[RMDB]
RNA sequence: GGGAACGACUCGAGUAGAGUCGAAAAGAGCGCGGACUCAACUCUAUCAUGAGACGCACGGAUCUUAAGUUCAACCUCGUACACAUAGCCUCGGUAUAACCGAAUUGGAAUAAGUUAUCUGGUCUGCUAGGUCGACAUUGCUGAUAGUCUGAGGAUCCUCAUUAGAUCUAUUCGUAGAUCUAAUGAGAAAAGAAACAACAACAACAAC
Reactivity to 2A3 in 0.01 (KOAc 150mM, MgCl2 10mM, bicine 150mM(pH8.5), 24C), signal-to-noise 9, nucleotides 027 to 156: g040a000g020c110g020c060g060g160a190c010u010c020a050a100c050u060c060u190a150u160c070a110u140g030a010g020a030c030g020c060a020c040g050g020a050u040c020u100u120a140a110g010u090u070c040a050a100c010c010u050c050g040u100a040c070a010c020a110u120a060g030c000c020u020c020g020g000u090a130u080a270a070c020c010g030a080a070u140u120g030g030a050a090u090a120a060g040u050u060a060u060c040u070g020g050u020c010u020g020c030u040a030g010g050u020c020g030a040c030a100u090u150g010c020u020g020a050u030a050g030u030c040u040g020a030g050g010a050u070c000
Reactivity to DMS in 0.01 (KOAc 150mM, MgCl2 10mM, bicine 150mM(pH8.5), 24C), signal-to-noise 5, nucleotides 027 to 156: g010a100g010c000g030c050g030g010a170c040u000c000a040a090c060u000c060u000a120u000c090a160u010g010a110g010a080c040g010c050a070c040g010g010a040u000c040u000u000a060a130g010u000u000c030a080a080c030c020u000c030g010u000a080c060a080c050a130u000a110g010c040c010u000c030g040g020u000a080u000a070a080c020c020g010a060a170u000u010g000g020a100a120u010a050a090g000u000u000a020u000c030u020g030g010u000c040u010g030c030u000a060g020g030u000c020g020a080c060a090u000u000g020c030u000g000a070u000a070g010u000c020u000g000a110g010g020a130u000c040

The data come from the RNA Mapping Database (RMDB), library OK3TST. This 207-nucleotide RNA was probed chemically with 2A3 and DMS. 2A3 adducts were read by reverse transcription with SuperScript II with manganese. Values cover nucleotides 27 to 156. Values are in units of 0.01, from 0 to 300, in steps of 10. For DMS the reverse transcriptase was MarathonRT. The RNA was probed in 150 mM KOAc, 10 mM MgCl2 and 150 mM bicine (pH 8.5) at 24 C. For 2A3, 15,964 sequencing reads were counted.